[RMDB]
RNA sequence: GGGAACGACUCGAGUAGAGUCGAAAAGGCUGCGUAUCACUCUAGGGUACGUGAUAGAGCGAUAUAAGAAGCACUGGUACAUGCCGGCAGGGACAGUUAAGAGAUGGCCGCAGUCUCGUGUCCCUGCAAAAGGAGUUCUCGUUCGCGAGAACUCCAACUAAGUCGAUUUGUUCGCAAAUCGACUUAGAAAAGAAACAACAACAACAAC
Reactivity to 2A3 in 0.01 (KOAc 150mM, MgCl2 10mM, bicine 150mM(pH8.5), 24C), signal-to-noise 1, nucleotides 027 to 156: g040g000c030u020g050c030g010u000a000u000c010a000c030u140c090u100a080g140g010g050u050a030c060g080u030g030a050u050a020g090a010g000c040g030a000u010a010u030a160a080g070a100a000g000c060a030c070u040g010g010u090a100c000a080u120g110c040c080g030g000c000a000g000g000g000a010c000a050g020u150u130a130a000g080a010g000a000u020g090g040c090c030g010c080a040g000u040c000u030c000g010u010g000u000c000c000c000u000g000c000a000a000a000a000g010g000a000g000u020u000c000u000c000g020u030u070c200g000c060g010a000g000a000a000c000u040c000c000a020a000